An RNA of 207 nucleotides, treated with DMS and 2A3 and read out base by base. Reactivities are given for positions 27 through 156. The reactions ran in a buffer of 150 mM KOAc, 10 mM MgCl2 and 150 mM bicine (pH 8.5), at 24 C. It was measured as part of the RMDB library OK3TST. For DMS, 2,911 sequencing reads were counted.

[RMDB]
RNA sequence: GGGAACGACUCGAGUAGAGUCGAAAACAAACUGUCCGGUCAUCGAAUGAAUCAAUUAUUCCAGCCCUCCCGGCAGCUAUUUCUUCGGUGGUUAAAGAAUAUUUGCCGAUUACCUCGAUACCGCAUGACUCAAAGGAUUAAUUAUGACGCAUGUGGUGAUGACAUGUUGAUUCGUCAACAUGUCAUCAAAAGAAACAACAACAACAAC
Reactivity to DMS in 0.01 (KOAc 150mM, MgCl2 10mM, bicine 150mM(pH8.5), 24C), signal-to-noise 2, nucleotides 027 to 156: c040a050a050a090c070u000g030u010c010c030g010g000u000c030a040u010c060g000a050a110u000g010a130a080u000c060a130a090u000u020a120u000u000c030c060a170g010c000c020c030u010c060c020c000g000g040c090a030g020c090u010a070u000u000u000c070u000u000c010g040g020u010g000g000u000u010a080a060a100g000a050a070u000a030u000u000u000g050c010c030g000a140u010u000a080c070c010u000c020g010a140u000a080c010c020g020c030a030u000g010a120c040u000c030a030a100a130g010g030a160u010u000a060a080u000u000a120u000g000a090c100g010c010a020u000g000u000g030g010u000
Reactivity to 2A3 in 0.01 (KOAc 150mM, MgCl2 10mM, bicine 150mM(pH8.5), 24C), signal-to-noise 4, nucleotides 027 to 156: c000a000a020a020c050u020g070u030c020c020g020g030u050c030a030u040c060g090a060a080u130g070a080a090u110c120a030a100u180u070a080u100u120c050c070a060g010c070c000c000u030c000c000c000g020g020c030a000g010c000u080a060u100u180u060c020u060u050c000g030g030u030g020g080u110u150a030a040a000g050a080a050u080a060u100u070u070g010c000c000g030a030u020u130a070c020c020u060c050g080a050u140a130c070c000g000c010a010u030g080a180c020u000c060a040a090a030g050g000a050u070u140a070a080u100u160a170u180g000a010c100g010c000a000u020g040u030g020g000u020